[RMDB]
RNA sequence: GGGAACGACUCGAGUAGAGUCGAAAAUGUCCUCUGUAAAAUUAGUACUCGCUGGAACUGUUAUCAAUGCUUUAUGCAAUGCAAUUUCAAGUUUUAUUGUUUAUUUUGCUAAGGAUGCAGAAGGAAACAUCCUCCAUGAGUUCGCUCAUGGAGGAUGAAAAGAAACAACAACAACAAC
Reactivity to DMS in 0.01 (KOAc 150mM, MgCl2 10mM, bicine 150mM(pH8.5), 24C), signal-to-noise 2, nucleotides 027 to 126: u000g000u000c000c000u000c040u010g010u000a000a020a200a150u000u000a010g030u000a050c180u000c120g030c180u020g010g000a010a020c010u000g010u000u000a070u010c110a050a140u000g020c020u000u000u010a060u050g020c000a050a070u000g030c070a060a020u000u000u000c020a000a060g010u010u010u000u010a060u020u010g010u000u010u000a090u020u010u000u020g000c000u000a020a010g010g000a300u000g000c020a010g010a100a050g010g000a100a050a190
Reactivity to 2A3 in 0.01 (KOAc 150mM, MgCl2 10mM, bicine 150mM(pH8.5), 24C), signal-to-noise 3, nucleotides 027 to 126: u150g050u000c010c000u000c000u000g040u000a000a000a100a150u000u000a010g000u020a040c030u040c100g030c070u030g030g000a040a010c000u020g080u130u060a300u300c010a040a010u010g000c000u160u180u300a110u300g000c000a000a040u010g000c010a030a050u010u060u300c070a140a020g010u000u020u080u080a070u050u000g050u000u050u040a130u040u130u110u030g010c000u000a020a000g020g020a010u030g000c010a000g010a110a080g050g000a000a070a000
Overview
An RNA of 177 nucleotides, treated with DMS and 2A3 and read out base by base. Source: RMDB library OK2TST, as collected in RNAgym. 2A3 adducts were read by reverse transcription with SuperScript II with manganese.